[RMDB]
RNA sequence: GGGAACGACUCGAGUAGAGUCGAAAAUCUAGGCAACGUACGGGAGACGUAGUUCUUCAAUCACAUGACGCCUAGGGGAAAGUCCCCGGAUCUCGGGUAGAAAGUGCCGUGCGCUACUAUGGCGUGCCAAUUACUUGGACUUCGGUCCAAGUAAUUGAAAAGAAACAACAACAACAAC
Reactivity to DMS in 0.01 (KOAc 150mM, MgCl2 10mM, bicine 150mM(pH8.5), 24C), signal-to-noise 9, nucleotides 027 to 126: u040c000u000a020g010g010c020a080a300c080g020u000a070c300g010g010g000a010g000a020c020g010u020a090g020u040u000c010u000u000c010a060a110u000c170a110c100a060u020g000a120c290g020c010c000u000a010g000g000g000g010a110a090a120g000u000c020c000c010c030g010g000a090u010c030u000c040g010g000g010u000a060g000a080a100a070g010u010g000c060c060g020u010g000c020g000c010u000a100c180u030a070u020g000g000c010g010u010g000c080
Reactivity to 2A3 in 0.01 (KOAc 150mM, MgCl2 10mM, bicine 150mM(pH8.5), 24C), signal-to-noise 9, nucleotides 027 to 126: u030c000u010a010g000g000c020a080a030c090g060u100a020c070g040g030g010a020g010a000c060g180u200a070g090u150u000c000u010u000c010a050a200u130c040a040c030a120u130g070a060c070g000c000c000u010a010g000g000g020g040a030a140a010g090u050c000c010c010c000g050g040a100u040c080u060c070g030g000g010u040a060g110a070a140a020g090u070g070c040c030g020u030g010c020g000c000u100a120c040u070a120u230g030g000c020g010u020g010c010